RNA sequence: GGGAACGACUCGAGUAGAGUCGAAAAAAAGUUAUUUUUGAGAACCAAGAUUAUUUUCAUGCAAAUUUUGUUGAGUGGAAAAUUGCUACUGAACCUAAUUUUGAUGUUGAUUUGGAUCUUGAUUUGACUCAGGAUGGGGAUUCGUCCCCAUCCUGAGAAAAGAAACAACAACAACAAC
Reactivity to 2A3 in 0.01 (KOAc 150mM, MgCl2 10mM, bicine 150mM(pH8.5), 24C), signal-to-noise 1, nucleotides 027 to 126: a000a000a000g170u230u080a250u040u170u000u080u110g050a030g020a010a000c000c000a010a010g040a000u020u020a010u000u150u000u120c040a000u000g030c010a080a090a100u000u000u000u010g060u000u090g030a000g000u000g000g040a020a030a300a300u020u200g030c000u000a020c000u000g000a000a010c000c000u000a040a000u030u020u000u030g060a030u260g010u080u020g000a070u060u000u040g120g000a000u020c000u000u000g030a030u020u040u090g040a030